[RMDB]
Chemical mapping of a 177-nucleotide RNA with 2A3 and DMS. For 2A3 the reverse transcriptase was SuperScript II with manganese. The RNA was probed in 150 mM KOAc, 10 mM MgCl2 and 150 mM bicine (pH 8.5) at 24 C.
RNA sequence: GGGAACGACUCGAGUAGAGUCGAAAAGAUAUGGAGAGUGGCUUCAACAGCCUGUUCCUCGGAAACGAGGACAGGACAUGAAGCGCUCCUAAGUCAAAAUCAAGCACGGGUUCGCCCGUGCUUGAAACACAAUUUUAAUGUUCGCAUUAAAAUUGUGAAAAGAAACAACAACAACAAC
Reactivity to 2A3 in 0.01 (KOAc 150mM, MgCl2 10mM, bicine 150mM(pH8.5), 24C), signal-to-noise 3, nucleotides 027 to 126: g010a010u090a030u170g030g010a030g010a020g200u300g140g080c000u000u020c030a210a180c080a210g100c010c000u020g050u170u160c010c000u010c000g030g020a070a070a000c010g000a010g000g000a000c010a010g010g010a020c020a080u170g010a000a000g030c000g000c000u000c000c010u050a140a040g020u020c030a100a030a020a300u030c000a000a010g010c010a000c010g000g000g090u100u160c230g100c060c000c000g000u000g000c000u000u000g000a000a000a000
Reactivity to DMS in 0.01 (KOAc 150mM, MgCl2 10mM, bicine 150mM(pH8.5), 24C), signal-to-noise 4, nucleotides 027 to 126: g000a040u000a290u010g000g010a060g000a040g020u010g010g030c010u000u000c000a040a120c260a160g010c020c000u000g000u000u010c000c010u000c000g010g000a060a090a170c000g020a020g010g000a020c000a000g010g020a050c100a120u010g000a010a020g000c000g000c010u000c000c000u010a070a230g000u000c030a110a090a160a140u000c010a000a000g010c010a000c000g010g000g010u000u020c260g010c010c000c000g010u000g000c000u000u000g010a000a040a200